[RMDB]
RNA sequence: GGGAACGACUCGAGUAGAGUCGAAAAGAAAAGAGCGUAAUCGCGUCUUGACGUGAGUGAGGCUAGACUGUAGACUAUCCCAAGUGGGAUAGGAUAGCUCACAAUACGCUGAUCUACAGUCAAAAGAACUCGGAGCAGCUUUCGAGCUGCUCCGAGUAAAAGAAACAACAACAACAAC
Reactivity to DMS in 0.01 (KOAc 150mM, MgCl2 10mM, bicine 150mM(pH8.5), 24C), signal-to-noise 1, nucleotides 027 to 126: g010a100a000a040a080g000a100g000c020g020u060a050a300u010c000g020c000g040u000c050u010u030g120a040c000g010u000g020a060g000u000g000a010g020g010c010u000a120g000a030c000u000g030u000a010g000a080c000u000a000u000c000c000c010a300a230g040u010g000g000g000a000u000a000g020g000a130u000a000g000c070u000c000a050c090a140a070u020a020c020g000c000u000g010a160u000c000u120a050c010a030g000u000c000a120a120a070a100g000a090
Reactivity to 2A3 in 0.01 (KOAc 150mM, MgCl2 10mM, bicine 150mM(pH8.5), 24C), signal-to-noise 1, nucleotides 027 to 126: g180a000a010a010a000g020a000g000c000g000u060a220a000u180c000g010c060g000u000c000u130u230g010a000c000g000u020g060a010g000u000g000a040g000g000c000u010a000g000a000c000u000g000u000a000g000a000c000u000a010u030c030c000c000a030a110g300u300g040g000g000a000u000a000g020g020a000u060a000g080c000u020c000a000c000a000a000u000a000c000g000c050u050g010a000u060c000u020a000c000a000g000u030c000a060a000a000a000g070a040

The data come from the RNA Mapping Database (RMDB), library OK1LIB. An RNA of 177 nucleotides, treated with DMS and 2A3 and read out base by base. The DMS profile rests on 1,072 reads. Values cover nucleotides 27 to 126. For 2A3 the reverse transcriptase was SuperScript II with manganese.